Source information: This 177-nucleotide RNA was probed chemically with DMS and 2A3. It was measured as part of the RMDB library TTRDEL. For 2A3, 3,563 sequencing reads were counted. 2A3 is a SHAPE reagent: it acylates the 2'-hydroxyl of flexible nucleotides of all four kinds.
RNA sequence: GGGAACGACUCGAGUAGAGUCGAAAAGAUAUGGAGCGAGCGAUAAGAAGGUAUCGGAAACGAUACCCUUCUUUUGACGCUCGACUCCUAAGUCAAAGAACGGCGUUCCUUCGGGAACGCCGUUCAAGAUUGAUUUAACGUUCGCGUUAAAUCAAUCAAAAGAAACAACAACAACAAC
Reactivity to DMS in 0.01 (KOAc 150mM, MgCl2 10mM, bicine 150mM(pH8.5), 24C), signal-to-noise 3, nucleotides 027 to 126: g000a020u000a210u010g000g000a020g020c000g000a000g010c010g010a090u000a030a020g010a050a010g000g000u000a020u000c000g020g000a050a030a100c000g000a010u000a010c110c130c100u000u000c000u000u000u010u010g020a250c030g010c000u000c000g000a050c000u000c010c000u000a010a050g020u000c020a090a190a170g000a000a020c000g010g010c000g010u000u000c000c000u000u010c230g020g010g000a010a010c000g010c000c010g000u000u000c000a020a090
Reactivity to 2A3 in 0.01 (KOAc 150mM, MgCl2 10mM, bicine 150mM(pH8.5), 24C), signal-to-noise 1, nucleotides 027 to 126: g010a010u060a010u070g000g010a000g010c000g020a000g010c010g040a080u070a300a040g000a000a000g040g000u000a000u020c010g020g000a010a010a000c000g010a010u000a000c020c000c000u020u070c000u050u040u050u070g040a020c030g000c000u000c000g030a030c000u000c000c000u010a010a000g020u000c040a210a050a280g010a030a010c010g000g000c020g030u010u000c020c000u050u130c300g070g000g000a000a040c060g000c060c000g000u000u000c000a000a000